[RMDB]
RNA sequence: GGGAACGACUCGAGUAGAGUCGAAAAUGUGUGUGUGUGUGUGUGUGUGUAAAUCAUGUUGCUCUCUGGGUCUGUUUCCCAAUCUGUAGAGUGUAAAAGUCUCUGAGGCUCCUUGCAGAGACAAGUGAUGGAACGACCUUGACAGAAGAGAGCAGAGACCAUAGGUAUAUUUCGAUAUACCUAUGGUAAAAGAAACAACAACAACAAC
Reactivity to 2A3 in 0.01 (KOAc 150mM, MgCl2 10mM, bicine 150mM(pH8.5), 24C), signal-to-noise 3, nucleotides 027 to 156: u100g030u010g000u000g000u030g000u000g010u010g000u000g010u000g020u010g010u000g010u000g030u030a100a020a000u110c080a080u120g060u070u030g030c000u000c000u010c000u030g000g000g030u010c020u090g060u040u090u110c010c000c000a000a030u000c010u010g090u100a050g040a080g140u100g040u100a020a050a080a050g010u000c010u000c020u040g040a050g070g030c030u050c020c030u060u100g000c010a000g000a000g000a030c010a030a010g040u040g050a070u130g000g020a010a010c010g000a000c000c000u030u090g050a060c060a070g150a090a010g000a030g000a000g000c000a010g000a010g010
Reactivity to DMS in 0.01 (KOAc 150mM, MgCl2 10mM, bicine 150mM(pH8.5), 24C), signal-to-noise 3, nucleotides 027 to 156: u020g030u000g010u010g020u010g020u000g030u010g000u000g000u010g020u000g020u000g020u000g030u000a050a060a060u000c070a120u000g000u010u000g000c000u000c030u000c010u000g010g010g010u010c010u000g020u000u000u000c010c020c030a090a060u000c030u000g010u000a070g010a080g010u010g010u000a050a070a120a230g010u000c010u000c040u000g000a130g020g010c040u000c020c020u010u000g010c020a040g000a070g000a060c020a060a090g010u000g000a170u010g020g010a080a100c040g010a050c020c010u000u000g010a080c110a140g010a090a090g010a060g000a070g010c020a030g010a130g010
Structure probing data (2A3 and DMS) for a 207-nucleotide construct. For DMS, 12,431 sequencing reads were counted. For 2A3, 4,468 sequencing reads were counted. DMS adducts were read by reverse transcription with MarathonRT. The RNA was probed in 150 mM KOAc, 10 mM MgCl2 and 150 mM bicine (pH 8.5) at 24 C. For 2A3 the reverse transcriptase was SuperScript II with manganese.